[RMDB]
RNA sequence: GGGAACGACUCGAGUAGAGUCGAAAACAGUCAACGUGAAGGCGGGCCAGACCAUCGCCGCAUUCUACCAGAGCACCGUCAUGAUCUUUGGCACGAUGGCUCGCUACAUGCCGAGAGUUAGGGAAAAGCGAUUUAUGAUGUUCGCAUCAUAAAUCGCAAAAGAAACAACAACAACAAC
Reactivity to DMS in 0.01 (KOAc 150mM, MgCl2 10mM, bicine 150mM(pH8.5), 24C), signal-to-noise 2, nucleotides 027 to 126: c070a130g040u000c080a090a150c060g000u000g000a150a060g000g000c000g000g020g010c050c060a090g010a160c090c050a050u000c100g000c050c070g010c140a090u000u000c080u000a050c100c030a070g000a050g010c110a060c010c040g040u000c110a030u000g020a080u000c020u000u000u010g020g010c060a090c070g010a080u010g010g000c000u000c050g040c020u000a060c080a050u000g010c020c000g010a140g000a100g000u010u020a070g010g000g020a050a040a060a180
Reactivity to 2A3 in 0.01 (KOAc 150mM, MgCl2 10mM, bicine 150mM(pH8.5), 24C), signal-to-noise 1, nucleotides 027 to 126: c010a020g050u060c020a000a070c030g000u010g100a050a070g080g020c000g000g000g000c020c000a050g000a130c000c020a070u100c020g020c110c000g030c020a030u140u050c020u120a110c020c050a010g000a010g000c050a010c030c010g050u120c000a080u170g090a160u070c010u050u070u060g030g000c020a010c050g020a020u080g000g000c010u000c000g000c000u080a070c020a030u130g030c020c000g060a080g000a010g050u060u110a060g090g010g000a000a180a030a010